Chemical mapping of a 177-nucleotide RNA with DMS and 2A3. For 2A3 the reverse transcriptase was SuperScript II with manganese. DMS adducts were read by reverse transcription with MarathonRT. Values cover nucleotides 27 to 126. Source: RMDB library TTRDEL, as collected in RNAgym. The 2A3 profile rests on 16,818 reads.
RNA sequence: GGGAACGACUCGAGUAGAGUCGAAAAGAUAUGGAUCUGCUAGGGAGCUCGUGUCGGAAACGACGAGCGAGGAUCUAGUCAGAUCCUAAGUCAAAGUCUCAGGUCCUGUUCGCAGGACCUGAGACAAGUAAGUAUUCUUGUUCGCAAGAAUACUUACAAAAGAAACAACAACAACAAC
Reactivity to DMS in 0.01 (KOAc 150mM, MgCl2 10mM, bicine 150mM(pH8.5), 24C), signal-to-noise 7, nucleotides 027 to 126: g010a050u000a300u000g000g000a010u000c000u000g010c010u000a010g010g000g000a080g020c000u000c000g010u000g010u010c010g010g000a120a090a210c020g010a020c000g000a030g020c000g010a040g010g010a070u010c000u000a010g010u010c030a010g010a000u000c000c000u000a010a070g010u000c040a080a110a140g000u000c000u000c000a000g000g010u000c000c010u010g010u000u010c200g020c010a000g000g010a000c000c000u000g000a000g000a000c000a010a050
Reactivity to 2A3 in 0.01 (KOAc 150mM, MgCl2 10mM, bicine 150mM(pH8.5), 24C), signal-to-noise 4, nucleotides 027 to 126: g020a010u080a040u190g010g000a010u010c000u000g000c010u010a010g000g040g020a090g080c000u000c030g150u170g180u110c020g060g040a100a080a060c020g020a010c020g030a030g010c010g030a120g000g010a020u010c000u010a000g160u210c020a000g000a000u000c010c000u000a060a010g020u010c030a080a040a110g000u010c000u000c000a010g010g000u010c000c000u020g030u070u110c300g020c100a000g000g000a010c010c000u000g000a000g000a000c000a000a000